Notes
Chemical mapping of a 177-nucleotide RNA with 2A3 and DMS. In probing experiments dimethyl sulfate is read out at A N1 and C N3, which are open when not base-paired. The RNA was probed in 150 mM KOAc, 10 mM MgCl2 and 150 mM bicine (pH 8.5) at 24 C.
[RMDB]
RNA sequence: GGGAACGACUCGAGUAGAGUCGAAAAGGAAUACAACAGAGGGAUUAAAUAAAUCAGUUAGACUAGAUAAUAAACUAGCUUUGAUUGGUUCCGUCAUUAGAGUAUGCUCUAGAAUAGGUCGUACUGGAGUAGCCUCCAUGUUCGCAUGGAGGCUACUAAAAGAAACAACAACAACAAC
Reactivity to 2A3 in 0.01 (KOAc 150mM, MgCl2 10mM, bicine 150mM(pH8.5), 24C), signal-to-noise 1, nucleotides 027 to 126: g020g000a000a000u040a100c000a000a010c020a260g050a000g020g000g050a010u170u230a100a050a160u050a080a050a000u030c000a000g060u040u030a190g000a180c000u090a000g100a120u070a020a070u210a200a070a040c030u030a000g000c020u000u070u010g100a190u050u000g000g000u040u020c000c010g060u060c070a000u070u090a010g020a000g010u180a050u120g060c000u060c000u010a000g070a090a020u080a120g000g030u050c000g000u030a000c020u050g020g020
Reactivity to DMS in 0.01 (KOAc 150mM, MgCl2 10mM, bicine 150mM(pH8.5), 24C), signal-to-noise 1, nucleotides 027 to 126: g020g010a000a120u000a020c010a080a180c150a050g000a070g010g020g000a040u000u030a080a240a130u030a090a030a020u000c020a010g000u050u000a050g030a090c040u070a010g000a060u010a070a090u000a210a060a300c010u000a000g000c090u000u020u000g000a000u000u000g020g000u010u000c040c000g000u000c100a070u020u000a060g000a230g120u000a020u000g000c000u000c000u000a000g000a090a020u040a060g000g000u000c000g020u010a030c010u010g030g000